[RMDB]
Chemical mapping of a 207-nucleotide RNA with 2A3 and DMS. 2A3 adducts were read by reverse transcription with SuperScript II with manganese. Values cover nucleotides 27 to 156.
RNA sequence: GGGAACGACUCGAGUAGAGUCGAAAAAAGAGACCCAAAUGGACCAGGCGUGGUGGCGCAUGCCUGUAGUCCUAGUACUUUGGGAAGCCGAGGUGGGAAGAUCACUUGAGCCCAUGACUUCAAGGCUGCAGUGAACCAUGUGUGCCCCACUGCACUCAUAAUAAAGUGAAUUCGUUCACUUUAUUAUAAAAGAAACAACAACAACAAC
Reactivity to 2A3 in 0.01 (KOAc 150mM, MgCl2 10mM, bicine 150mM(pH8.5), 24C), signal-to-noise 6, nucleotides 027 to 156: a000a000g140a020g040a040c010c010c020a060a020a050u110g010g000a010c020c000a010g000g010c010g000u010g000g020u020g040g000c040g000c020a000u020g000c000c000u020g010u040a010g000u000c000c000u010a010g010u030a030c040u060u070u030g030g000g030a090a020g000c020c030g040a070g040g020u020g000g020g010a090a060g030a110u070c010a020c020u080u130g040a030g010c000c000c020a080u120g090a090c060u110u070c130a060a040g010g020c020u040g030c010a010g000u010g040a050a050c040c030a140u130g070u030g020u090g130c060c060c000c060a010c010u020g000c030a040c040u090c040
Reactivity to DMS in 0.01 (KOAc 150mM, MgCl2 10mM, bicine 150mM(pH8.5), 24C), signal-to-noise 6, nucleotides 027 to 156: a050a070g000a150g000a210c020c010c000a030a080a090u010g010g010a040c020c020a020g010g000c010g050u000g010g040u010g030g010c290g000c010a020u000g000c010c000u000g010u000a070g020u000c010c000u000a090g020u000a070c130u000u000u000g020g010g000a100a100g010c050c030g010a110g010g030u010g030g020g000a080a100g010a140u000c030a060c020u000u000g000a070g010c010c010c280a120u010g010a050c040u000u000c030a070a060g010g020c030u000g010c030a070g020u000g000a070a080c020c030a110u000g020u010g020u000g010c010c000c010c010a200c030u000g000c010a070c070u000c050
Record summary: DMS adducts were read by reverse transcription with MarathonRT. In probing experiments dimethyl sulfate is read out at A N1 and C N3, which are open when not base-paired. Conditions: 150 mM KOAc, 10 mM MgCl2 and 150 mM bicine (pH 8.5), 24 C.